[RMDB]
RNA sequence: GGGAACGACUCGAGUAGAGUCGAAAAACUAUAGAUGAGCGUCGUAUGAUCGCAUUCGAGUUUAUCAAAACAUAUUCUACUCAUCCGUUAGAUUCUAUAACUUAUUUGAUGAAUAGGUUUAAAAAUACAUGGCGUAGUGAUUCGUCACUACGCCAUGAAAAGAAACAACAACAACAAC
Reactivity to 2A3 in 0.01 (KOAc 150mM, MgCl2 10mM, bicine 150mM(pH8.5), 24C), signal-to-noise 2, nucleotides 027 to 126: a010c090u100a040u080a200g010a030u030g070a040g040c050g150u050c020g000u230a060u100g040a180u170c100g040c140a010u080u090c070g000a010g000u030u030u040a070u050c020a020a070a040a070c050a010u150a090u080u070c000u040a010c000u010c030a080u050c050c000g000u010u010a030g000a110u020u010c080u070a140u070a230a010c000u040u030a040u060u070u050g170a090u120g000a010a000u000a010g030g000u020u080u070a060a180a040a020a010u130a010
Reactivity to DMS in 0.01 (KOAc 150mM, MgCl2 10mM, bicine 150mM(pH8.5), 24C), signal-to-noise 1, nucleotides 027 to 126: a070c050u010a030u010a100g000a010u000g000a080g010c050g000u000c060g010u000a010u000g000a130u010c130g040c060a210u010u000c090g000a110g000u000u000u000a100u000c060a100a050a090a120c140a070u000a020u000u020c040u000a020c000u000c000a080u000c070c130g000u000u000a030g010a150u000u000c040u000a100u010a000a010c000u000u000a040u000u000u010g000a180u010g000a020a010u010a020g000g000u000u000u000a020a030a020a080a120u000a040